[RMDB]
RNA sequence: GGGAACGACUCGAGUAGAGUCGAAAAAGGCAGCGGUCAUUCAGUUACCAAACCUCAACGUUUCUCGCGUAAAACACUGCGAGGUCGUACUGCUGAGCCCAGUUCGACUUCUACUCGUGCUUAUUACCGAUAACGGUAGGGUAGAGCAACGCAACGACGCGUGAGGCGUCUUCGGACGCCUCACGCGAAAAGAAACAACAACAACAAC
Reactivity to 2A3 in 0.01 (KOAc 150mM, MgCl2 10mM, bicine 150mM(pH8.5), 24C), signal-to-noise 1, nucleotides 027 to 156: a000g020g030c040a040g000c060g030g000u030c010a080u170u120c060a090g110u100u160a110c060c130a220a140a150c030c090u200c100a080a000c040g010u070u170u060c060u020c000g000c010g050u100a030a040a140a000c180a090c040u150g020c010g010a000g000g030u020c040g020u050a000c000u020g010c020u030g090a050g040c040c000c000a010g120u010u000c000g000a020c000u130u040c000u070a010c000u010c020g000u000g000c000u010u060a050u020u090a030c000c030g050a070u190a240a040c040g030g000u000a010g100g050g030u040a050g040a000g050c000a120a040c000g000c030a030a070c090g110a000